[RMDB]
RNA sequence: GGGAACGACUCGAGUAGAGUCGAAAAGGAUGCCAGAUGGGCUCUACCUGUUCGUCGGCGAAAUCAUCGGCAACGAACUGCAGGCUUUCCACGGUUUCGCCCGCGAGGUCCUAACGGCAAUCACCGUAGGUCGCAUCGACGCCGAGCAACUCCGCGCCUUCAUCAAUGAGUUCGCUCAUUGAUGAAGAAAAGAAACAACAACAACAAC
Reactivity to DMS in 0.01 (KOAc 150mM, MgCl2 10mM, bicine 150mM(pH8.5), 24C), signal-to-noise 2, nucleotides 027 to 156: g010g010a100u030g030c030c020a210g040a120u020g020g010g030c030u000c060u000a060c020c020u000g020u000u000c020g000u000c210g020g020c020g000a030a070a080u010c050a110u010c020g030g010c050a070a110c010g010a040a070c070u000g000c060a070g010g010c060u000u010u000c040c070a030c030g000g010u000u010u000c050g000c040c000c030g040c030g010a100g030g010u000c040c000u000a160a200c050g010g020c020a090a120u000c070a190c020c020g030u000a070g010g010u020c030g020c040a130u010c020g010a080c060g020c010c020g000a100g010c030a110a120c060u000c030c020g000c030g020c060
Reactivity to 2A3 in 0.01 (KOAc 150mM, MgCl2 10mM, bicine 150mM(pH8.5), 24C), signal-to-noise 4, nucleotides 027 to 156: g070g010a030u110g010c020c030a040g070a220u170g040g010g000c040u010c050u080a100c020c050u050g080u100u060c030g010u020c030g000g010c010g020a020a030a010u060c040a040u130c080g030g000c050a060a040c060g090a060a060c050u140g060c100a080g030g020c000u050u090u040c060c050a030c090g010g020u000u030u030c020g000c000c010c000g010c020g010a020g000g030u050c010c000u070a150a030c010g010g020c060a050a050u080c040a040c020c000g010u030a020g020g030u040c060g010c100a130u040c020g080a060c020g050c030c020g000a010g000c030a050a060c020u000c050c020g020c000g080c030
The data come from the RNA Mapping Database (RMDB), library OK3TST. An RNA of 207 nucleotides, treated with DMS and 2A3 and read out base by base. For 2A3 the reverse transcriptase was SuperScript II with manganese. Reactivities are given for positions 27 through 156. The RNA was probed in 150 mM KOAc, 10 mM MgCl2 and 150 mM bicine (pH 8.5) at 24 C. The DMS profile rests on 4,039 reads.